[RMDB]
RNA sequence: GGGAACGACUCGAGUAGAGUCGAAAAUUGGCCACUCGCAUGAGGAUGAUCAGCGGAGGGUGCAGGCGCAGCGUCUCUUUCAGCACGUUUUCCAGCUGCGGAAUCUGGCGCAGCGCAUGGAAACUCAGCUACGCUUACAAUUCGUUGUAAGCGUAGCAAAAGAAACAACAACAACAAC
Reactivity to 2A3 in 0.01 (KOAc 150mM, MgCl2 10mM, bicine 150mM(pH8.5), 24C), signal-to-noise 2, nucleotides 027 to 126: u070u080g090g000c000c030a070c020u030c020g080c130a190u070g020a020g140g100a180u190g070a090u090c020a010g030c020g040g030a040g030g010g040u070g120c020a010g010g020c000g000c010a030g020c020g060u030c000u010c000u040u060u030c020a000g000c010a020c120g030u000u030u120u040c060c050a010g000c030u000g000c000g010g040a040a040u070c080u070g070g030c010g000c010a020g000c000g000c040a020u070g020g050a050a050a020c020u040c040a000
Reactivity to DMS in 0.01 (KOAc 150mM, MgCl2 10mM, bicine 150mM(pH8.5), 24C), signal-to-noise 3, nucleotides 027 to 126: u020u000g020g000c020c020a090c030u000c040g010c060a060u010g010a060g010g020a140u000g010a110u000c040a050g010c040g000g000a070g000g010g010u000g020c020a070g010g010c020g010c040a060g010c030g020u010c010u000c030u000u000u010c040a060g000c030a050c170g000u010u000u020u010c140c170a170g020c040u000g000c010g000g000a020a050u010c070u010g000g010c000g000c010a020g000c000g020c060a040u020g010g010a070a050a070c040u000c090a160